[RMDB]
RNA sequence: GGGAACGACUCGAGUAGAGUCGAAAAAAAGGAAAGAGGUUUAGUUGACUCACCCUUCUGCAUGGCUAGGAGGCCUCAGGAAACUUAUGAUCAAAGGGGAAGAGGGAGCAGGCACAUCUUACAUGGUACAGGAGAGAGAGGAGAAAGUGAAUGGGGAGCAGGUAUUACCUUUCGAGGUAAUACCUGCAAAAGAAACAACAACAACAAC
Reactivity to 2A3 in 0.01 (KOAc 150mM, MgCl2 10mM, bicine 150mM(pH8.5), 24C), signal-to-noise 2, nucleotides 027 to 156: a000a000a000g080g000a020a040a010g040a000g000g010u030u090u180a010g030u030u070g020a110c030u020c050a060c000c020c000u010u100c050u050g060c090a180u180g050g000c010u060a080g010g060a070g000g080c000c000u050c030a030g020g080a030a030a000c030u160u090a070u180g090a060u080c080a060a040a090g030g000g020g000a020a070g010a060g030g000g000a000g000c050a030g060g020c060a020c000a080u040c020u090u130a100c030a040u070g040g000u030a050c030a020g040g000a020g010a000g000a000g000a010g020g020a030g020a010a040a000g000u090g050a100a060u020g000g010g030g010a050